[RMDB]
RNA sequence: GGGAACGACUCGAGUAGAGUCGAAAAAAAAUUGGAAUACCAAUAAAUCAACGUUUUUCAACUUAUGAAAUGCUUGGUUUUCAUUAAAAAUGAUAUGGUUUCCUACCACAAAUCCCUGUCAAGAUGAAAGAAUCACAGGAUUCGUCCUGUGAUUCUUAAAAGAAACAACAACAACAAC
Reactivity to DMS in 0.01 (KOAc 150mM, MgCl2 10mM, bicine 150mM(pH8.5), 24C), signal-to-noise 2, nucleotides 027 to 126: a010a020a020a040u040u010g000g010a080a020u040a000c000c020a080a100u030a030a020a010u000c020a000a020c150g000u000u000u010u000u020c010a030a140c240u060u030a070u000g000a010a000a000u000g030c040u000u000g010g010u000u000u000u000c000a020u000u050a020a070a130a090a020u000g000a060u000a070u000g000g000u000u010u000c020c000u000a060c130c080a060c100a060a060a040u010c000c000c000u020g030u010c110a050a090g010a090u000g020a100
Reactivity to 2A3 in 0.01 (KOAc 150mM, MgCl2 10mM, bicine 150mM(pH8.5), 24C), signal-to-noise 3, nucleotides 027 to 126: a000a000a000a000u160u050g000g010a100a030u150a130c010c000a000a030u120a150a000a000u020c000a010a010c140g010u010u010u040u010u000c040a110a060c070u230u160a120u290g000a020a000a000u000g040c020u010u000g000g010u000u030u000u010c000a020u030u230a090a120a140a090a000u040g010a010u010a050u090g000g010u020u000u000c000c000u020a010c010c030a050c050a060a060a080u050c030c000c040u090g150u100c070a080a070g030a120u210g090a150
The record gives the reactivity of an RNA of 177 nucleotides to DMS and 2A3. The 2A3 profile rests on 1,160 reads.